[RMDB]
The record gives the reactivity of an RNA of 207 nucleotides to DMS and 2A3. It was measured as part of the RMDB library M2RFPK. The DMS profile rests on 4,578 reads. DMS adducts were read by reverse transcription with MarathonRT. Values are in units of 0.01, from 0 to 300, in steps of 10. The reactions ran in a buffer of 150 mM KOAc, 10 mM MgCl2 and 150 mM bicine (pH 8.5), at 24 C.

RNA sequence: GGGAACGACUCGAGUAGAGUCGAAAAGUAAGUAGAGUGUCGGCAAGCUCUAUAUAUGGACACUUACGAAGGGUUUUGGUUGUUUUGUAUCUCAAGCCGACUUUGAGUAUUUGAGGAAAAUACGACAUGAAUCCUGUGACGUUCGCGUCACAGGAAACCAUUAGAGAAAGUUCGCUUUCUCUAAUGGAAAAGAAACAACAACAACAAC
Reactivity to DMS in 0.01 (KOAc 150mM, MgCl2 10mM, bicine 150mM(pH8.5), 24C), signal-to-noise 2, nucleotides 027 to 156: g030u000a050a240g010u010a030g000a080g040u000g000u010c030g040g000c070a110a300g020c010u000c010u000a050u000a120u010a110u020g000g010a120c020a040c020u000u000a090c060g020a090a110g010g010g020u000u000u010u000g010g000u000u000g000u000u000u000u010g020u000a070u000c010u000c030a070a140g000c020c010g020a050c020u020u010u000g010a250g000u000a020u000u010u000g000a140g030g000a140a060a060a050u000a060c050g010a110c060a090u000g000a070a170u010c010c000u000g010u000g030a030c000g040u000u000c300g030c050g050u000c000a010c000a020g030g000a000a020a070
Reactivity to 2A3 in 0.01 (KOAc 150mM, MgCl2 10mM, bicine 150mM(pH8.5), 24C), signal-to-noise 3, nucleotides 027 to 156: g030u060a050a000g000u020a010g010a020g010u030g030u070c030g030g040c050a060a110g030c040u000c050u030a040u020a020u010a020u180g110g060a030c030a010c040u060u110a040c080g080a060a080g040g040g050u030u060u130u180g060g000u010u020g010u020u050u010u040g040u040a090u040c010u010c070a030a050g000c000c000g010a030c040u040u070u080g050a020g010u030a050u020u060u070g050a090g010g160a030a020a030a020u110a030c070g040a020c030a070u180g080a140a070u020c000c000u010g000u010g000a000c000g000u030u030c270g020c000g090u000c000a000c000a000g000g000a000a000a000